RNA sequence: GGGAACGACUCGAGUAGAGUCGAAAAGAUAUGGAACAUCAAGGCUCCCUUGAAGCUAGCUCGGAAACGAGCUAGUGGAGGAGCUUGAGUGUUCCUAAGUCAAAACUGGUAACUUCGGUUACCAGAACACCAAACCACUGUUCGCAGUGGUUUGGUGAAAAGAAACAACAACAACAAC
Reactivity to DMS in 0.01 (KOAc 150mM, MgCl2 10mM, bicine 150mM(pH8.5), 24C), signal-to-noise 2, nucleotides 027 to 126: g000a040u000a200u030g020g000a010a010c000a010u010c110a130a160g010g000c010u010c010c000c300u000u000g020a180a150g010c010u000a000g010c010u000c000g020g010a050a030a070c010g000a000g050c000u010a010g010u000g000g000a010g020g030a020g000c010u000u000g000a030g020u010g000u000u010c000c000u010a000a090g010u000c000a080a080a110a260c020u020g040g010u000a010a000c000u010u000c210g040g020u000u000a000c000c000a010g000a100a040
Conditions: 150 mM KOAc, 10 mM MgCl2 and 150 mM bicine (pH 8.5), 24 C. An RNA of 177 nucleotides, treated with DMS and read out base by base. The DMS profile rests on 1,196 reads. DMS (dimethyl sulfate) methylates the pairing face of unpaired adenines and cytosines. The data come from the RNA Mapping Database (RMDB), library TTRDES. Reactivities are given for positions 27 through 126.